[RMDB]
RNA sequence: GGGAACGACUCGAGUAGAGUCGAAAAGAUAUGGAUUAUGGGAGUCCGCCAUCGGAAACGAUGGAGUGGGACGAAGAACAUACGGUCCUAAGUCGAGCAUCAGUGAAUCUUCGGAUUCACUGAUGAAUCACCUCCACCUGUUCGCAGGUGGAGGUGAAAAAGAAACAACAACAACAAC
Reactivity to DMS in 0.01 (KOAc 150mM, MgCl2 10mM, bicine 150mM(pH8.5), 24C), signal-to-noise 1, nucleotides 027 to 126: g000a040u000a000u000g040g010a000u000u000a300u010g000g000g000a070g020u000c000c000g020c020c000a010u010c000g010g000a010a020a030c020g000a000u000g000g010a020g000u020g040g000g010a000c020g110a050a160g010a150a200c020a010u000a040c300g010g000u000c020c000u000a000a060g010u000c000g000a130g020c000a030u000c000a000g020u000g000a000a020u000c000u000u010c300g080g020a020u000u000c000a030c000u010g000a000u000g000a020a100
Reactivity to 2A3 in 0.01 (KOAc 150mM, MgCl2 10mM, bicine 150mM(pH8.5), 24C), signal-to-noise 1, nucleotides 027 to 126: g030a000u040a040u070g000g000a030u040u090a260u300g010g000g000a020g000u050c000c060g010c000c030a000u000c010g000g000a000a000a000c000g000a010u020g160g040a040g130u300g140g010g000a000c000g030a120a000g000a000a000c000a000u060a030c110g010g020u010c010c010u000a030a000g020u040c060g030a040g070c030a000u000c010a020g000u000g020a000a010u000c020u050u140c300g130g010a010u000u000c000a010c000u020g000a000u000g000a000a010